RNA sequence: GGGAACGACUCGAGUAGAGUCGAAAAGUAAGAAAGAAAUUAGCUCGCCAGUUAGCGAGGUCUGUCCCCACACGACAGAUAAUCGGGUGCAACUCCCGCCCCUUUUCCGAGGGUCAUCGGAACCAAAAAAACUCAGGCAACUUCGGUUGCCUGAGAAUCAGUCAUAAAAGUUCGCUUUUAUGACUGAAAAAGAAACAACAACAACAAC
Reactivity to 2A3 in 0.01 (KOAc 150mM, MgCl2 10mM, bicine 150mM(pH8.5), 24C), signal-to-noise 3, nucleotides 027 to 156: g050u120a040a070g030a180a080a020g060a030a170a100u130u070a110g010c000u010c000g010c030c050a170g170u120u160a020g010c000g000a000g000g010u000c000u000g000u010c050c020c020c000a060c000a000c040g020a000c000a000g000a020u020a060a050u100c020g000g000g000u010g000c010a000a000c020u020c020c000c000g020c000c000c000c000u100u180u070u000c000c000g000a000g020g000g020u030c030a020u010c000g000g010a000a000c020c010a040a090a060a050a010a010a020c000u000c000a000g000g000c000a000a000c010u070u130c210g010g010u000u010g000c000c000u000g000a000g000a000a000
Reactivity to DMS in 0.01 (KOAc 150mM, MgCl2 10mM, bicine 150mM(pH8.5), 24C), signal-to-noise 1, nucleotides 027 to 156: g020u000a080a180g020a090a080a190g000a090a130a140u000u000a220g030c000u000c040g030c000c000a240g050u040u000a050g020c050g010a040g000g000u000c000u020g000u000c000c040c010c220a100c140a100c160g000a010c020a000g010a030u000a120a020u000c020g010g000g030u010g000c000a130a300c010u020c000c030c000g000c020c000c000c020u010u020u000u000c020c000g000a040g000g000g000u000c070a030u000c050g000g020a020a090c200c070a000a000a180a110a040a030a190c010u060c010a000g000g010c010a010a000c000u000u000c300g020g030u000u010g020c000c000u010g020a010g020a000a030
The record gives the reactivity of an RNA of 207 nucleotides to 2A3 and DMS. The RNA was probed in 150 mM KOAc, 10 mM MgCl2 and 150 mM bicine (pH 8.5) at 24 C. The DMS profile rests on 1,890 reads.